[RMDB]
RNA sequence: GGGAACGACUCGAGUAGAGUCGAAAACUGUUGAACCAGCGUAGUGCUGACUCGUUAAGAGAGAGUCAUGGACACGCCGACAGGAACACGCAGGGUCGGGGCAGCAUAAACGAGCCGGUUGCGGUCAAAAGCUUAACAUGUUCGCAUGUUAAGCUUUAAAAGAAACAACAACAACAAC
Reactivity to 2A3 in 0.01 (KOAc 150mM, MgCl2 10mM, bicine 150mM(pH8.5), 24C), signal-to-noise 6, nucleotides 027 to 126: c010u000g030u050u040g080a100a110c030c020a020g000c020g070u140a140g000u230g130c010u010g000a010c000u000c010g130u150u250a260a040g070a020g030a000g010a000g140u010c010a040u130g060g040a000c000a000c020g000c000c000g020a000c000a020g030g020a030a010c050a010c060g010c040a040g010g000g070u050c030g040g000g020g020c010a020g000c020a050u130a120a090a030c080g020a020g030c000c000g030g020u060u070g020c020g000g020u030c030a010
Reactivity to DMS in 0.01 (KOAc 150mM, MgCl2 10mM, bicine 150mM(pH8.5), 24C), signal-to-noise 6, nucleotides 027 to 126: c030u000g010u010u000g010a100a120c080c100a220g020c020g030u000a080g030u010g010c030u000g000a030c000u000c000g000u030u020a180a170g010a160g030a130g000a020g010u000c010a010u030g000g000a040c020a050c010g000c000c030g010a070c030a040g000g010a090a090c090a080c080g020c030a070g000g000g010u010c070g010g000g000g030c030a040g000c100a050u020a040a090a100c090g000a130g000c010c030g010g010u010u000g000c080g000g010u010c090a090